[RMDB]
RNA sequence: GGGAACGACUCGAGUAGAGUCGAAAAGGGAAUGGUGGUUUACCCCGUUAUAAAAUGAUUACCGACCAAUAAUUGGCGAAACUCGUUUCGCGUUGGCUGCCUAAUUCAAGGAAUUAGCGUGCCUUCAAAGACAUCAAGAAGUUCGCUUCUUGAUGAACGAUUAGAUCGGGUUCGCCCGAUCUAAUCGAAAAGAAACAACAACAACAAC
Reactivity to DMS in 0.01 (KOAc 150mM, MgCl2 10mM, bicine 150mM(pH8.5), 24C), signal-to-noise 1, nucleotides 027 to 156: g000g040g030a100a140u010g000g010u000g000g010u000u020u000a170c030c010c000c030g040u010u000a300u010a060a050a130a160u010g000a130u000u000a040c020c000g000a050c020c030a080a060u000a060a180u000u010g040g010c010g000a080a070a020c050u000c160g040u000u000u010c000g000c040g000u000u020g010g040c020u010g000c000c010u000a000a040u010u000c070a200a130g050g000a060a050u010u010a050g000c060g000u000g000c040c020u020u010c050a040a110a090g000a230c020a000u010c010a000a000g010a030a060g060u000u000c300g020c010u000u000c010u000u000g000a010u000g000a030a170
Reactivity to 2A3 in 0.01 (KOAc 150mM, MgCl2 10mM, bicine 150mM(pH8.5), 24C), signal-to-noise 3, nucleotides 027 to 156: g050g010g020a130a090u160g030g020u020g000g090u010u060u230a100c000c000c000c020g050u090u050a170u070a110a130a030a040u120g030a030u070u060a010c000c040g050a050c040c090a030a010u150a100a080u110u140g040g000c030g000a010a000a040c040u050c110g050u010u010u020c020g000c020g010u010u010g000g000c030u070g040c000c020u030a000a020u020u060c090a200a070g210g030a070a000u000u010a010g040c030g040u020g000c000c000u010u010c040a080a080a030g050a050c000a000u000c000a000a000g000a000a000g000u050u160c160g040c130u000u000c000u000u000g000a000u000g000a020a030